Chemical mapping of a 177-nucleotide RNA with 2A3 and DMS. Source: RMDB library 15KREP, as collected in RNAgym.
[RMDB]
RNA sequence: GGGAACGACUCGAGUAGAGUCGAAAAUAUUUGGUGUAAAACCAGCUGUGUCUUUUGAUUAUCUUAUUAGGGAGGCUAAGACUAGAGUUUUAGUCGUCGUUAAUUCCCAAGAUGUCUAUAAGAGUCUCUUCAACAGUAAGUUCGCUUACUGUUGAAGAAAAGAAACAACAACAACAAC
Reactivity to 2A3 in 0.01 (KOAc 150mM, MgCl2 10mM, bicine 150mM(pH8.5), 24C), signal-to-noise 2, nucleotides 027 to 126: u190a070u060u130u070g000g000u050g000u050a090a170a050a020c010c000a010g040c050u070g030u050g060u220c010u030u050u090u020g020a030u010u250a010u090c000u050u080a110u060u090a130g000g050g020a030g000g000c000u000a030a000g010a010c030u080a120g030a050g300u010u030u010u010a000g000u010c020g030u000c010g010u000u030a030a040u140u020c000c000c030a000a000g030a030u030g020u000c030u020a040u020a150a030g000a020g100u000c000u000
Reactivity to DMS in 0.01 (KOAc 150mM, MgCl2 10mM, bicine 150mM(pH8.5), 24C), signal-to-noise 1, nucleotides 027 to 126: u000a090u000u000u000g000g030u000g000u030a090a040a120a030c000c000a060g040c260u010g010u000g000u000c030u010u010u000u000g000a040u000u000a030u010c030u000u000a120u000u000a070g030g000g020a110g020g010c000u000a050a020g000a010c000u010a120g010a170g010u000u010u000u000a000g020u000c000g000u000c060g000u000u000a050a140u000u000c020c040c020a090a100g000a020u000g000u000c040u010a030u000a030a100g000a030g000u010c090u000

About this RNA: The DMS profile rests on 1,072 reads. High 2A3 reactivity points to a flexible backbone, as in loops and unpaired stretches. The reactions ran in a buffer of 150 mM KOAc, 10 mM MgCl2 and 150 mM bicine (pH 8.5), at 24 C. 2A3 adducts were read by reverse transcription with SuperScript II with manganese. Reactivities are rounded to 0.1 and cut off at 0 and 3. The 2A3 profile rests on 1,532 reads.